[RMDB]
RNA sequence: GGGAACGACUCGAGUAGAGUCGAAAAGCCGAAGAGUUCGCUCUUCGGCGACGAAUAUGGCGUAGAUGAGAGUCUACAGUACUAGCCAUCCCAGAUGUACAAAUAAGCAUUGCUUCGGCAAUGCUAACAAUCACUCUUGGUUCGCCAAGAGUGAUUGAAAAGAAACAACAACAACAAC
Reactivity to 2A3 in 0.01 (KOAc 150mM, MgCl2 10mM, bicine 150mM(pH8.5), 24C), signal-to-noise 5, nucleotides 027 to 126: g000c000c010g000a000a000g000a000g040u120u160c200g030c130u000c000u000u010c010g010g080c000g010a010c020g100a080a090u230a110u260g000g010c050g010u010a010g000a010u020g050a020g010a010g080u000c000u010a010c030a030g020u010a020c020u060a020g000c010c010a050u010c020c000c000a040g040a130u140g000u010a020c040a040a090a070u270a160a020g000c000a000u010u010g000c000u010u090c160g050g000c000a000a000u000g000c000u000a000a010
Reactivity to DMS in 0.01 (KOAc 150mM, MgCl2 10mM, bicine 150mM(pH8.5), 24C), signal-to-noise 4, nucleotides 027 to 126: g010c000c000g000a000a010g000a020g030u000u020c220g010c010u000c010u000u000c000g000g010c010g010a040c160g010a130a110u010a100u000g010g020c010g010u000a010g000a020u000g010a240g000a200g010u000c010u000a010c000a120g020u010a010c040u010a290g000c000c010a080u000c000c000c010a150g000a090u000g010u000a040c040a140a080a090u010a080a030g000c000a010u000u000g000c000u000u020c170g010g010c010a010a010u000g000c000u000a030a060